RNA sequence: GGGAACGACUCGAGUAGAGUCGAAAAAAAGGGAGGUGUGUUACUCAUCGAACCAACUCGUCCGUUAGCUCAAAACGUAUACAAGCAACUUGGAAGUAAUCCUUUUCACUUGUCACCAAAUUUGCGCACGAUCUACAUGAUUCGUCAUGUAGAUCGUAAAAGAAACAACAACAACAAC
Reactivity to DMS in 0.01 (KOAc 150mM, MgCl2 10mM, bicine 150mM(pH8.5), 24C), signal-to-noise 5, nucleotides 027 to 126: a070a030a080g000g000g010a090g000g010u010g010u020g030u020u020a060c060u000c050a100u020c030g000a070a080c050c040a080a090c050u030c030g000u030c030c030g020u000u010a050g020c020u000c050a080a030a060a070c170g000u010a080u010a080c080a050a100g010c110a090a040c130u020u020g010g020a040a070g010u020a040a070u010c030c020u000u010u010u000c090a040c010u010u010g000u020c100a130c050c050a060a030a170u000u010u010g010c100g010c160
Reactivity to 2A3 in 0.01 (KOAc 150mM, MgCl2 10mM, bicine 150mM(pH8.5), 24C), signal-to-noise 9, nucleotides 027 to 126: a000a010a010g100g020g000a080g020g010u060g010u040g050u120u090a080c040u040c040a060u090c070g040a040a060c000c010a010a050c020u030c030g100u030c030c000g030u050u050a030g020c010u020c050a050a070a020a010c050g060u100a050u060a160c050a070a040g020c010a030a080c050u060u090g040g010a060a030g040u170a060a140u080c010c000u020u030u040u040c060a070c060u030u070g040u080c030a030c060c000a020a100a300u110u120u100g050c080g010c010